[RMDB]
RNA sequence: GGGAACGACUCGAGUAGAGUCGAAAAGGCUCGAUCGUGGAUCCUUUCGCGGUUGAAACUACCGAAGCCUUAGCUGCCCGAAAGGGUGACCUCCGCGACUCGCAAAACAAGGAGAGGUCUCAAAAGCUAGUGGCUCCUAGCUGCUGCUCGUGCAGUGACAACUAUAGCGAUUCGUCGCUAUAGUUGUAAAAGAAACAACAACAACAAC
Reactivity to DMS in 0.01 (KOAc 150mM, MgCl2 10mM, bicine 150mM(pH8.5), 24C), signal-to-noise 2, nucleotides 027 to 156: g020g000c050u000c000g020a020u010c020g040u010g030g000a060u010c130c130u010u000u000c050g030c050g000g020u020u000g000a130a050a070c030u000a200c050c000g020a060a080g000c000c020u000u010a040g030c000u000g010c000c000c000g000a140a100a210g020g010g000u010g000a020c010c000u000c020c040g020c000g000a100c040u010c050g030c060a120a080a050a300c110a060a110g010g000a100g010a030g020g000u000c000u000c030a020a040a160a030g010c020u000a050g020u000g020g020c030u000c020c020u000a130g030c020u000g020c030u000g000c030u000c110g040u000g010c040a160g000u000g000
Reactivity to 2A3 in 0.01 (KOAc 150mM, MgCl2 10mM, bicine 150mM(pH8.5), 24C), signal-to-noise 6, nucleotides 027 to 156: g030g000c020u010c010g020a040u010c020g020u030g050g080a110u110c020c060u060u090u090c080g000c040g020g020u030u040g040a120a050a040c080u110a060c040c010g110a120a010g000c000c000u000u010a010g000c000u010g010c020c000c000g030a070a020a010g020g020g000u030g010a010c000c010u020c010c010g020c020g130a150c040u100c130g090c080a030a110a080a100c050a120a050g090g020a130g020a010g020g010u010c010u010c060a080a120a010a000g000c010u020a000g110u040g100g020c000u020c010c010u030a040g010c010u040g000c010u010g000c030u060c120g130u120g000c010a010g010u020g070